[RMDB]
RNA sequence: GGGAACGACUCGAGUAGAGUCGAAAAGAUAUGGACUGGCGAGAAUCGUAUCGGAAACGAUACGAAUUCGAUGAGCCAGGUCCUAAGUCAAAACUAUGGAUUAAUGCUUCGGCAUUAAUCCAUAGAACCCUUAGGUUAUGUUCGCAUAACCUAAGGGAAAAGAAACAACAACAACAAC
Reactivity to DMS in 0.01 (KOAc 150mM, MgCl2 10mM, bicine 150mM(pH8.5), 24C), signal-to-noise 5, nucleotides 027 to 126: g010a020u000a300u010g000g010a200c010u010g000g010c000g010a190g000a020a020u000c000g000u000a000u000c000g010g000a100a060a210c000g010a020u000a000c010g010a020a050u000u000c010g000a150u010g010a240g000c000c000a000g000g010u000c000c000u000a030a170g000u000c040a070a080a120a150c010u000a000u000g000g000a010u000u000a000a000u000g000c010u000u020c250g030g010c000a000u000u000a000a010u000c000c000a000u000a000g000a040a130
Reactivity to 2A3 in 0.01 (KOAc 150mM, MgCl2 10mM, bicine 150mM(pH8.5), 24C), signal-to-noise 3, nucleotides 027 to 126: g000a020u060a040u110g000g000a020c000u000g000g000c010g030a080g000a070a010u010c010g000u010a010u000c010g010g020a090a050a020c030g000a000u010a020c000g000a000a040u010u000c000g080a100u200g050a020g020c000c000a010g060g050u040c000c000u020a110a020g060u030c030a000a010a140a180c010u010a000u000g010g000a010u010u010a000a000u000g010c030u040u120c300g030g000c000a000u010u010a000a000u000c000c000a000u000a000g000a000a000
Structure probing data (DMS and 2A3) for a 177-nucleotide construct.
Source: RMDB library TTRDEL, as collected in RNAgym.
Reactivities are given for positions 27 through 126.
For 2A3, 9,619 sequencing reads were counted.
2A3 adducts were read by reverse transcription with SuperScript II with manganese.
Reactivities are rounded to 0.1 and cut off at 0 and 3.
For DMS the reverse transcriptase was MarathonRT.